An RNA of 177 nucleotides, treated with DMS and 2A3 and read out base by base. The RNA was probed in 150 mM KOAc, 10 mM MgCl2 and 150 mM bicine (pH 8.5) at 24 C.
[RMDB]
RNA sequence: GGGAACGACUCGAGUAGAGUCGAAAACUCAAUGUUUCUGCAGAAAUUUAGAAAGGGCUGGCAAUAUUAAUGCCAUGGUACGAGCCUUAGGGGCAGCUGAAGCCUUUAAGGUCCCUGAAAGUGGCUAUUCAAGAAUUCGUUUCGACGAAUUCUUGAAAAAAGAAACAACAACAACAAC
Reactivity to DMS in 0.01 (KOAc 150mM, MgCl2 10mM, bicine 150mM(pH8.5), 24C), signal-to-noise 2, nucleotides 027 to 126: c030u020c000a090a070u060g000u000u000u000c000u000g000c210a070g000a060a070a030u020u060u040a080g000a090a180a030g010g030g000c090u010g000g020c000a070a090u080a150u050u040a080a050u010g000c000c000a000u020g000g050u010a040c190g000a080g030c000c010u000u000a000g000g010g010g000c000a100g060c200u020g000a160a110g000c000c000u000u000u000a000a030g000g020u010c000c030c000u000g000a070a060a040g010u000g000g000c010u010a170
Reactivity to 2A3 in 0.01 (KOAc 150mM, MgCl2 10mM, bicine 150mM(pH8.5), 24C), signal-to-noise 3, nucleotides 027 to 126: c040u000c010a020a100u070g010u010u040u000c020u010g030c000a010g190a140a180a070u140u110u090a110g080a110a240a020g000g000g020c000u000g000g000c010a010a100u130a110u300u170a200a100u110g000c000c000a000u050g020g090u090a030c080g050a020g060c010c000u010u020a000g000g000g000g000c010a070g030c090u120g040a160a000g000c000c000u020u010u000a000a000g000g020u030c000c000c000u030g030a070a080a050g090u100g070g020c020u040a060